An RNA of 207 nucleotides, treated with 2A3 and read out base by base. The 2A3 profile rests on 815 reads. For 2A3 the reverse transcriptase was SuperScript II with manganese.
RNA sequence: GGGAACGACUCGAGUAGAGUCGAAAAUGUAAAUCCAGGGACACCCAGUUCUCCGAGGUAACGGGGGCUAUGUGGUCAGCCAGCCUGAGACGCCACAAAGCAGUAGGGUUGGCAAAAUGGUCGUGAUUCCUUCUAGCUUAAUACAUAUUUCGGACCGCACUGGCGUAUAGUUCGCUAUACGCCAGUGAAAAGAAACAACAACAACAAC
Reactivity to 2A3 in 0.01 (KOAc 150mM, MgCl2 10mM, bicine 150mM(pH8.5), 24C), signal-to-noise 2, nucleotides 027 to 156: u050g010u010a050a050a010u070c040c030a050g050g020g030a010c010a030c030c020c010a000g050u220u110c020u000c010c000g050a100g020g200u140a170a070c030g000g000g000g000g000c000u010a040u140g090u100g000g040u000c010a000g000c020c000a000g000c010c000u060g000a060g000a050c050g000c010c000a170c090a110a100a010g020c030a000g000u090a000g000g000g000u000u000g000g000c000a040a000a000a070u030g010g000u020c020g020u040g090a130u050u040c030c000u010u230c060u100a090g020c040u080u130a070a040u090a230c050a030u110a260u120u040u100c010g040g030a040c000c060g000